[RMDB]
RNA sequence: GGGAACGACUCGAGUAGAGUCGAAAAUUACUCUUGUUAGGUGAAAGUUGAUGGUCGCCGAGCCAGUCCGUACAUCCAAAUAGGACUCUAUGUAGUAGGAAGUCGAGAGCCUAUGAGAGUUAGAGUCAUGCCUAUUUUGUGUUCGCACAAAAUAGAAGGGAAGAUUAAACUUCGGUUUAAUCUUCCCAAAAGAAACAACAACAACAAC
Reactivity to DMS in 0.01 (KOAc 150mM, MgCl2 10mM, bicine 150mM(pH8.5), 24C), signal-to-noise 1, nucleotides 027 to 156: u000u000a060c020u000c030u020u020g010u000u000a120g030g040u000g010a060a060a070g060u020u000g000a090u020g020g010u000c020g020c000c020g010a090g020c010c060a060g020u000c020c000g040u000a060c060a080u000c070c110a020a060a120u010a090g030g020a060c000u000c010u000a050u020g020u000a300g020u020a070g020g020a050a050g060u020c140g020a240g010a290g030c010c020u000a060u000g020a250g000a150g020u010u000a070g000a070g000u020c020a080u000g020c110c020u000a000u000u000u000u000g020u010g000u010u010c300g000c000a030c010a040a000a010a020u000a060g010a100a120
Reactivity to 2A3 in 0.01 (KOAc 150mM, MgCl2 10mM, bicine 150mM(pH8.5), 24C), signal-to-noise 1, nucleotides 027 to 156: u090u050a020c000u000c010u060u100g080u130u110a060g020g020u030g090a070a070a070g070u080u080g020a080u030g060g030u030c030g010c070c020g010a010g010c020c010a020g010u020c020c040g040u040a070c020a070u040c030c060a070a070a060u070a070g130g000a020c010u020c010u000a050u030g070u020a060g010u000a000g030g000a030a080g010u010c020g040a010g020a000g180c000c030u030a030u030g020a010g010a010g110u010u040a000g000a000g020u040c020a010u090g080c020c010u000a010u010u000u000u000g010u000g010u030u040c120g020c070a000c000a000a010a000a030u010a010g010a060a130
Record summary: Structure probing data (DMS and 2A3) for a 207-nucleotide construct. The reactions ran in a buffer of 150 mM KOAc, 10 mM MgCl2 and 150 mM bicine (pH 8.5), at 24 C. The data come from the RNA Mapping Database (RMDB), library M2RFPK. 2A3 adducts were read by reverse transcription with SuperScript II with manganese. Reactivities are given for positions 27 through 156.